[RMDB]
RNA sequence: GGGAACGACUCGAGUAGAGUCGAAAACGAGCGGAUAGCCGUAAAGCACUUCGACCAGACCAAGAUAGGCCAGAUUGCGGUCGAGACCCGCAGUGGGGCGCUUGCCGGUUUCCUGAAUGGGAUGAAACAUCAUGGGUACGUUCGCGUACCCAUGAUGAAAAGAAACAACAACAACAAC
Reactivity to DMS in 0.01 (KOAc 150mM, MgCl2 10mM, bicine 150mM(pH8.5), 24C), signal-to-noise 2, nucleotides 027 to 126: c040g010a140g000c080g000g020a140u000a070g000c000c040g000u000a050a090a050g000c050a130c060u000u030c020g010a070c050c030a150g000a080c070c000a050a100g000a100u020a100g000g000c000c020a120g010a100u000u000g010c120g010g030u000c030g050a160g000a110c300c030c000g000c050a030g000u010g040g000g030g000c160g030c030u000u000g030c190c040g010g000u000u000u000c000c000u000g040a070a070u020g010g000g010a110u000g000a090a080a180
Overview
This 177-nucleotide RNA was probed chemically with DMS. DMS adducts were read by reverse transcription with MarathonRT. The RNA was probed in 150 mM KOAc, 10 mM MgCl2 and 150 mM bicine (pH 8.5) at 24 C. Source: RMDB library OK2TST, as collected in RNAgym.